[RMDB]
RNA sequence: GGGAACGACUCGAGUAGAGUCGAAAAAGGUGAUUUCUCCUGCACCUUUAUCAAUGGAGGAGCUCGACUUUGCUGUGGGUCCCAAAGGGACCUUAGGUGCAGACAGUUACCGGCGGUGAAGUGUGAGCAUAGGUUCGUGUCUUCGGACACGAACCAACUAUCUAUGCUUGUUCGCAAGCAUAGAUAGAAAAGAAACAACAACAACAAC
Reactivity to DMS in 0.01 (KOAc 150mM, MgCl2 10mM, bicine 150mM(pH8.5), 24C), signal-to-noise 3, nucleotides 027 to 156: a020g030g020u000g000a300u000u000u000c010u000c030c030u010g040c050a060c000c000u000u000u020a070u030c200a090a070u000g010g020a080g010g010a080g010c050u000c010g000a050c040u010u000u010g020c010u000g020u010g040g010g010u000c000c000c020a070a090a190g020g010g000a000c010c000u000u000a020g030g010u000g020c010a180g000a110c150a090g030u000u000a040c000c020g020g000c050g000g020u000g010a040a060g010u000g020u010g010a110g000c050a060u010a030g010g010u000u000c000g050u000g010u000c000u000u000c300g040g000a020c000a000c000g000a000a000c010c010a000a070
Reactivity to 2A3 in 0.01 (KOAc 150mM, MgCl2 10mM, bicine 150mM(pH8.5), 24C), signal-to-noise 9, nucleotides 027 to 156: a000g000g000u000g000a010u010u020u000c010u010c000c000u170g110c030a010c010c000u110u260u110a040u030c050a010a040u300g010g000a010g000g000a010g000c000u000c000g020a010c000u000u010u020g000c000u010g010u100g020g000g000u000c000c000c020a150a150a090g010g000g000a010c000c000u020u060a020g000g000u000g000c000a050g110a300c030a030g030u060u130a010c000c000g030g010c010g010g010u020g020a000a010g030u100g070u090g130a010g000c030a030u120a040g010g000u000u000c000g000u000g000u000c000u020u070c220g070g000a000c000a000c000g000a000a000c000c000a000a000